[RMDB]
The record gives the reactivity of an RNA of 177 nucleotides to DMS and 2A3. DMS adducts were read by reverse transcription with MarathonRT.
RNA sequence: GGGAACGACUCGAGUAGAGUCGAAAACCCACUCGCACGGGUAGCCUGCGACUUGCUGCGCGUGGCCCUAAGCAAUGAAGAUGACACUUGAGAGAGGUUCCACUCUGCAGAGACAUCUUCACCGUCAGGAAUUAUUGCUGUUCGCAGCAAUAAUUCCAAAAGAAACAACAACAACAAC
Reactivity to DMS in 0.01 (KOAc 150mM, MgCl2 10mM, bicine 150mM(pH8.5), 24C), signal-to-noise 3, nucleotides 027 to 126: c050c000c020a110c130u000c170g020c050a040c210g020g000g050u010a120g010c050c000u020g030c010g020a090c040u000u030g040c120u030g010c000g020c040g010u010g020g030c010c040c030u010a100a130g000c090a300a190u030g010a020a000g000a040u020g010a110c140a190c010u000u010g040a180g020a000g030a060g000g000u000u060c240c130a180c010u010c000u000g020c030a220g000a030g010a110c000a000u000c000u000u000c000a030c100c070g000u050c130a110
Reactivity to 2A3 in 0.01 (KOAc 150mM, MgCl2 10mM, bicine 150mM(pH8.5), 24C), signal-to-noise 6, nucleotides 027 to 126: c000c000c010a010c040u130c070g040c000a030c040g000g000g110u180a030g030c000c010u050g020c030g050a070c020u080u200g080c090u050g020c030g000c010g080u040g020g020c000c000c000u080a130a060g030c000a030a100u090g000a010a000g000a010u010g040a040c020a030c150u040u070g010a030g010a000g000a010g190g020u230u100c060c010a150c060u010c000u030g020c020a020g010a010g040a130c010a000u010c000u000u010c000a030c020c040g120u110c030a050